[RMDB]
RNA sequence: GGGAACGACUCGAGUAGAGUCGAAAACGUCUUCGACCGGCAUUCGGGCGUCGACCACGUCUUUGCCGGCGUCUCUCCGGAGGGGAAGACGGCGGCUGUCGAGCGGAUGAAAAUCGACGAUCGAGUAGCGAUGGUCGGCGACGGGACGAACGACGCGGCAGCACUAAUUGUUCGCAAUUAGUGCUGCAAAAGAAACAACAACAACAAC
Reactivity to 2A3 in 0.01 (KOAc 150mM, MgCl2 10mM, bicine 150mM(pH8.5), 24C), signal-to-noise 1, nucleotides 027 to 156: c010g000u000c020u000u000c010g020a020c000c000g060g070c060a160u150u200c070g120g060g000c010g000u020c000g020a050c000c000a000c010g050u010c030u000u090u060g000c000c000g000g010c000g000u000c000u010c000u000c040c000g300g080a170g070g140g030g030a010a040g010a000c010g040g000c040g000g000c010u070g090u190c030g050a070g050c080g030g140a080u060g040a070a070a000a220u060c010g000a030c000g000a080u050c040g000a060g030u120a080g090c060g250a300u020g020g000u000c000g000g020c030g030a020c000g000g000g010a000c000g010a180a020c150g050a010c000g000c010g160
Chemical mapping of a 207-nucleotide RNA with 2A3. The reactions ran in a buffer of 150 mM KOAc, 10 mM MgCl2 and 150 mM bicine (pH 8.5), at 24 C. It was measured as part of the RMDB library OK3TST.